[RMDB]
RNA sequence: GGGAACGACUCGAGUAGAGUCGAAAACCUCACUACAUUUUACUGUUCCUAAAGAAUUUGUGACAGGUACAGUAAAACGUAUUGCAAGGUUUAUCAGUACCUAUAAACAGGUAAAUAACAAUAUAUGAAAAGCAAAGACUGUUCGCAGUCUUUGCAACUAUUUACAAGGCUUCGGCCUUGUAAAUAGAAAAGAAACAACAACAACAAC
Reactivity to 2A3 in 0.01 (KOAc 150mM, MgCl2 10mM, bicine 150mM(pH8.5), 24C), signal-to-noise 5, nucleotides 027 to 156: c000c000u030c000a010c010u020a000c000a020u010u010u010u000a000c000u000g010u030u070c020c000u080a110a160a070g100a230a270u250u300u300g150u090g050a090c060a060g000g000u010a000c000a000g000u000a000a010a000a000c010g000u000a000u010u040g030c090a080a020g040g010u020u050u040a080u110c030a030g080u040a020c000c000u060a070u150a150a150a030c060a010g020g020u060a070a080a090u170a070a040c030a070a040u150a020u060a070u240g060a100a120a010a030g000c000a000a000a000g000a000c000u000g040u080u110c250g010c090a000g010u000c000u000u000u000g000c000a000a000
Reactivity to DMS in 0.01 (KOAc 150mM, MgCl2 10mM, bicine 150mM(pH8.5), 24C), signal-to-noise 1, nucleotides 027 to 156: c020c000u000c020a110c050u000a000c020a050u000u000u000u000a000c000u000g000u000u010c020c020u000a160a200a180g010a140a170u010u000u000g030u000g020a200c170a000g030g000u010a000c010a040g000u000a010a010a010a020c000g020u010a010u000u000g020c080a130a050g020g110u000u000u000a110u000c010a090g020u000a080c000c000u000a140u010a040a110a080c100a050g000g000u000a040a080a110u000a170a060c020a050a120u020a110u010a140u000g000a070a040a120a250g000c010a000a050a040g000a010c000u010g040u000u000c300g010c000a010g010u000c020u010u020u020g000c010a000a000

This 207-nucleotide RNA was probed chemically with 2A3 and DMS. For 2A3 the reverse transcriptase was SuperScript II with manganese. The data come from the RNA Mapping Database (RMDB), library M2RFOK. For DMS the reverse transcriptase was MarathonRT. For DMS, 2,014 sequencing reads were counted.